[RMDB]
RNA sequence: GGGAACGACUCGAGUAGAGUCGAAAACGGGUCCCUCCCAUGAUGUAGGGAUUAUGGGAGCUACAGUUCAAGAUGAGAUUUGGGUGGGGACACAAACCAUAUCAUCACUGUGUAUAUGUGUGUGUGUGUGAGAGAGAGAGAGAAUGAGGAUAUUGAACACCUCAUCGGAUUUCGAUCCGAUGAGGUGAAAAGAAACAACAACAACAAC
Reactivity to 2A3 in 0.01 (KOAc 150mM, MgCl2 10mM, bicine 150mM(pH8.5), 24C), signal-to-noise 1, nucleotides 027 to 156: c030g020g030g060u070c040c000c000u030c060c000c000a040u010g010a000u020g080u090a020g050g060g050a000u010u080a020u030g000g000g010a020g000c010u080a040c030a100g000u060u090c050a020a030g050a070u100g010a020g000a040u050u050u080g020g000g020u080g000g030g000g000a000c000a000c000a060a050a030c040c000a020u030a010u070c050a010u060c010a070c120u160g000u000g060u160a010u000a030u120g220u010g010u030g030u000g000u010g000u000g000u040g010a080g010a020g000a000g010a000g010a000g000a000g020a020a030u110g000a010g010g050a020u120a140u250u300g030a070a000
An RNA of 207 nucleotides, treated with 2A3 and read out base by base. The RNA was probed in 150 mM KOAc, 10 mM MgCl2 and 150 mM bicine (pH 8.5) at 24 C. It was measured as part of the RMDB library OK3TST. Reactivities are given for positions 27 through 156. For 2A3 the reverse transcriptase was SuperScript II with manganese.